[RMDB]
RNA sequence: GGGAACGACUCGAGUAGAGUCGAAAAGAAAGCUGGUCAUCCGUUCGGACCAGAAAGGCAGUCACAAACGAAACCUGAGGAAACAGGAAGCCACAACAAAAGCCAUGUGAUUAGCGAAUGGAAAGAACGGCCUCAUAGUAUUCGUACUAUGAGGCCGAAAAGAAACAACAACAACAAC
Reactivity to DMS in 0.01 (KOAc 150mM, MgCl2 10mM, bicine 150mM(pH8.5), 24C), signal-to-noise 2, nucleotides 027 to 126: g000a050a070a110g000c050u070g000g010u000c000a200u040c040c000g000u000u090c000g020g040a000c000c070a000g000a050a140a090g020g000c010a090g000u000c040a070c040a100a050a070c020g090a180a140a220c060c020u020g000a220g000g050a190a070a230c000a160g000g000a050a120g000c000c080a050c000a220a170c250a050a040a150a030g060c000c070a080u080g000u000g000a000u000u000a090g060c010g000a050a080u060g000g030a150a080a080g000a050a090
Reactivity to 2A3 in 0.01 (KOAc 150mM, MgCl2 10mM, bicine 150mM(pH8.5), 24C), signal-to-noise 2, nucleotides 027 to 126: g080a020a110a010g050c000u010g000g080u050c030a060u000c000c010g030u020u050c030g000g000a000c000c020a020g000a010a000a000g030g040c000a000g030u050c020a000c070a140a170a010c110g150a010a050a080c020c000u070g020a120g050g220a080a070a000c020a000g010g010a010a020g000c050c090a020c000a190a010c030a000a050a000a010g030c080c030a010u060g020u000g080a160u080u080a050g010c010g010a000a000u060g010g010a000a090a000g040a050a080
An RNA of 177 nucleotides, treated with DMS and 2A3 and read out base by base.
Source: RMDB library OK1LIB, as collected in RNAgym.
Conditions: 150 mM KOAc, 10 mM MgCl2 and 150 mM bicine (pH 8.5), 24 C.